[RMDB]
RNA sequence: GGGAACGACUCGAGUAGAGUCGAAAAAGGGCGAGUCGACCUCUCCAUCGGCACGAGGACGUGCCUGGUUUUGAGUGGGGGAGGAUGUUACGGACAAAUUCCGUAACCGUGUGAGGCCAACAUCAAAGAUGCGUACCUAGCUGCGUUUCAACCUGCGCCAAUUUAGUACGUUCGCGUACUAAAUUGGAAAAGAAACAACAACAACAAC
Reactivity to DMS in 0.01 (KOAc 150mM, MgCl2 10mM, bicine 150mM(pH8.5), 24C), signal-to-noise 1, nucleotides 027 to 156: a090g000g000g080c060g040a050g080u000c000g000a090c000c060u000c000u010c030c060a090u020c060g030g000c000a060c010g030a100g030g000a300c000g090u000g000c000c000u000g010g060u000u040u000u000g010a190g000u030g000g190g020g010g020a100g000g210a060u000g020u010u000a000c000g030g010a120c010a190a100a150u000u010c000c000g000u000a000a000c010c120g060u000g010u030g010a060g060g040c030c050a110a030c000a080u000c040a150a200a200g000a140u000g010c000g000u000a130c010c000u000a170g020c010u000g000c000g010u000u010u010c040a010a180c060c030u030g030c180g100
Reactivity to 2A3 in 0.01 (KOAc 150mM, MgCl2 10mM, bicine 150mM(pH8.5), 24C), signal-to-noise 3, nucleotides 027 to 156: a000g040g010g000c010g020a020g030u040c020g050a110c020c010u000c010u000c030c030a100u200c050g020g010c010a020c010g050a110g190g200a090c070g000u000g000c000c030u020g040g040u030u090u060u220g110a080g010u100g000g010g010g000g010a040g010g000a020u140g000u000u000a000c000g000g020a030c180a160a230a110u170u020c010c000g000u000a020a000c010c020g010u030g030u080g080a040g050g000c030c000a020a010c020a040u130c070a000a120a040g060a030u070g020c010g020u040a050c020c020u030a070g020c070u030g010c020g020u000u060u060c060a110a080c000c020u100g000c020g040
Record summary: An RNA of 207 nucleotides, treated with DMS and 2A3 and read out base by base. Conditions: 150 mM KOAc, 10 mM MgCl2 and 150 mM bicine (pH 8.5), 24 C. 2A3 is a SHAPE reagent: it acylates the 2'-hydroxyl of flexible nucleotides of all four kinds.